An RNA of 177 nucleotides, treated with DMS and 2A3 and read out base by base. 2A3 adducts were read by reverse transcription with SuperScript II with manganese.
RNA sequence: GGGAACGACUCGAGUAGAGUCGAAAAGAAAGAAAGAAGGUGAGUGCGUUUCCAAGUGUGAAGGGACCCUUCCUGUAGUGUCUUAUAUACAAUACAGUAGGAAUGUUCCUUCUUUGCCACUCAUAAACAGCUGUACAACAUUCGUGUUGUACAGCUGAAAAGAAACAACAACAACAAC
Reactivity to DMS in 0.01 (KOAc 150mM, MgCl2 10mM, bicine 150mM(pH8.5), 24C), signal-to-noise 4, nucleotides 027 to 126: g000a120a090a090g010a130a070a080g020a120a100g030g020u000g000a020g010u000g010c090g000u030u000u000c040c020a090a060g020u010g010u000g000a000a020g000g000g000a010c010c100c010u000u000c300c020u000g000u000a000g010u000g000u010c170u030u040a130u030a120u040a020c000a020a060u000a010c000a010g000u010a020g000g000a120a090u070g010u000u000c010c010u000u000c000u000u000u040g000c140c010a010c010u010c040a030u010a040a090a240
Reactivity to 2A3 in 0.01 (KOAc 150mM, MgCl2 10mM, bicine 150mM(pH8.5), 24C), signal-to-noise 5, nucleotides 027 to 126: g060a000a060a000g110a020a080a000g090a020a010g150g030u030g020a010g000u050g040c090g020u000u090u000c050c000a050a010g140u150g020u040g070a010a000g000g000g010a010c010c000c020u010u060c090c010u010g010u000a010g000u000g030u010c090u140u190a130u020a010u020a220c010a010a030u000a010c000a000g020u030a000g020g030a090a080u210g010u010u010c000c000u000u000c000u020u020u020g010c000c000a020c010u010c000a020u110a020a110a000
The reactions ran in a buffer of 150 mM KOAc, 10 mM MgCl2 and 150 mM bicine (pH 8.5), at 24 C.